[RMDB]
RNA sequence: GGGAACGACUCGAGUAGAGUCGAAAAACCAUGGACCCGGUGAAAUUCCACUAGUCGUGAAGAUGCGACUUACCCGCGGAAGGACGGAAAGACCCCGUGAACCUUCACUGCAGCUUGGCAUUGGCCGUAAGAAGAAGAACUUCGGUUCUUCUUCUUAAAAAGAAACAACAACAACAAC
Reactivity to DMS in 0.01 (KOAc 150mM, MgCl2 10mM, bicine 150mM(pH8.5), 24C), signal-to-noise 9, nucleotides 027 to 126: a110c020c010a100u010g000g010a100c040c040c020g000g000u010g000a060a090a120u010u000c030c030a080c140u010a030g020u010c020g010u000g000a130a090g010a120u020g010c020g000a050c020u000u010a060c090c040c050g020c060g000g010a070a060g000g010a090c030g000g000a070a080a090g000a160c090c040c010c020g020u010g000a090a090c040c010u010u000c020a090c050u010g010c040a070g010c080u020u000g000g010c040a120u010u010g010g010c000c040g010
Reactivity to 2A3 in 0.01 (KOAc 150mM, MgCl2 10mM, bicine 150mM(pH8.5), 24C), signal-to-noise 9, nucleotides 027 to 126: a000c010c000a010u040g060g020a060c000c010c030g000g010u060g060a110a090a070u100u030c040c010a030c070u050a020g010u010c020g020u040g080a120a080g100a120u240g040c010g000a000c000u010u070a070c010c030c000g020c020g030g030a050a050g080g030a040c030g010g040a090a100a030g090a060c000c000c020c000g010u030g040a020a050c010c000u040u030c030a030c060u070g010c010a020g020c020u060u130g020g000c020a110u030u130g080g000c000c000g020
An RNA of 177 nucleotides, treated with DMS and 2A3 and read out base by base. It was measured as part of the RMDB libraries RFM100 and RFMREP. For 2A3 the reverse transcriptase was SuperScript II with manganese. DMS adducts were read by reverse transcription with MarathonRT.